Annotation: The data come from the RNA Mapping Database (RMDB), library OK2TST. This 177-nucleotide RNA was probed chemically with 2A3 and DMS. Conditions: 150 mM KOAc, 10 mM MgCl2 and 150 mM bicine (pH 8.5), 24 C. DMS adducts were read by reverse transcription with MarathonRT. In probing experiments dimethyl sulfate is read out at A N1 and C N3, which are open when not base-paired.

RNA sequence: GGGAACGACUCGAGUAGAGUCGAAAAACUCGCCUUAGCCUGCCCCUUACCAGUAAUCCCAUGAUAGGCAAUCGGAUCGAUCUCGGCUGCCGGAUAGCCUUUGCCCUUUUGCGUCUUUAGGUGGAUAGUGAAGGAAUUGAUUCGUCAAUUCCUUCACAAAAGAAACAACAACAACAAC
Reactivity to 2A3 in 0.01 (KOAc 150mM, MgCl2 10mM, bicine 150mM(pH8.5), 24C), signal-to-noise 1, nucleotides 027 to 126: a000c000u030c030g020c010c000u030u060a030g030c000c010u000g020c020c000c000c010u000u060a050c010c000a040g020u040a070a050u030c020c000c000a040u130g040a040u040a060g020g020c000a040a030u020c030g010g030a070u070c050g050a070u020c040u030c100g030g020c000u010g070c010c000g040g030a090u080a030g000c010c000u040u000u050g020c030c000c000u010u050u060u090g020c010g050u050c030u030u060u110a090g050g010u050g030g060a070u070a130
Reactivity to DMS in 0.01 (KOAc 150mM, MgCl2 10mM, bicine 150mM(pH8.5), 24C), signal-to-noise 4, nucleotides 027 to 126: a100c060u000c040g020c040c020u000u000a120g010c030c010u010g010c020c010c040c030u000u000a070c050c030a090g000u010a110a130u000c020c010c020a100u010g020a070u000a080g020g000c040a070a060u010c050g010g000a100u000c090g010a090u000c050u000c040g010g020c050u000g020c030c020g020g000a070u010a080g020c020c020u000u000u000g010c040c010c020u000u000u000u000g030c120g020u000c010u000u000u000a090g020g010u010g000g010a120u010a120